The record gives the reactivity of an RNA of 207 nucleotides to DMS and 2A3. Values cover nucleotides 27 to 156. For DMS, 3,151 sequencing reads were counted. The data come from the RNA Mapping Database (RMDB), library OK3TST. For DMS the reverse transcriptase was MarathonRT. Conditions: 150 mM KOAc, 10 mM MgCl2 and 150 mM bicine (pH 8.5), 24 C.
[RMDB]
RNA sequence: GGGAACGACUCGAGUAGAGUCGAAAACAAUUUUCGUCGUCAGAGUUGGACACUGAACGCCAUAUUAUACGCGGGGUGAACAUCUCUAGGGUACCGGCGCGAGGGACGAAGUCGCGGUUUGCUAACAAAGUGCCUUUGCGCAACAGUACUAGUCCCGGAUUAUUACCCCAUUCGUGGGGUAAUAAUCAAAAGAAACAACAACAACAAC
Reactivity to DMS in 0.01 (KOAc 150mM, MgCl2 10mM, bicine 150mM(pH8.5), 24C), signal-to-noise 1, nucleotides 027 to 156: c060a070a070u000u000u000u000c090g040u020c060g000u000c020a010g000a130g020u000u000g020g010a300c020a030c040u010g000a120a060c000g020c020c080a210u000a140u020u000a160u010a010c020g000c030g000g000g000g010u010g000a070a280c010a010u000c020u010c040u010a160g000g050g000u000a020c030c000g000g000c030g020c020g010a090g000g000g030a050c020g000a110a220g010u000c090g040c040g000g010u010u010u000g030c040u000a030a070c080a050a100a190g000u000g010c050c010u000u000u000g060c000g000c030a050a040c020a030g030u010a030c010u000a140g010u000c010c010c000g000
Reactivity to 2A3 in 0.01 (KOAc 150mM, MgCl2 10mM, bicine 150mM(pH8.5), 24C), signal-to-noise 5, nucleotides 027 to 156: c020a050a040u090u050u100u210c080g020u030c010g040u070c070a020g000a010g030u020u030g020g020a020c040a020c040u080g170a290a110c040g010c030c050a120u130a130u300u250a180u150a140c080g010c020g040g000g010g000u010g000a010a000c000a010u020c010u000c020u070a070g070g030g000u030a030c020c050g050g030c000g000c020g010a030g000g010g010a010c010g030a080a070g020u060c040g010c010g080g080u120u180u290g040c030u050a080a070c030a090a110a030g080u190g240c010c030u020u020u080g010c010g000c000a020a020c010a020g000u030a000c010u010a030g090u020c010c000c000g010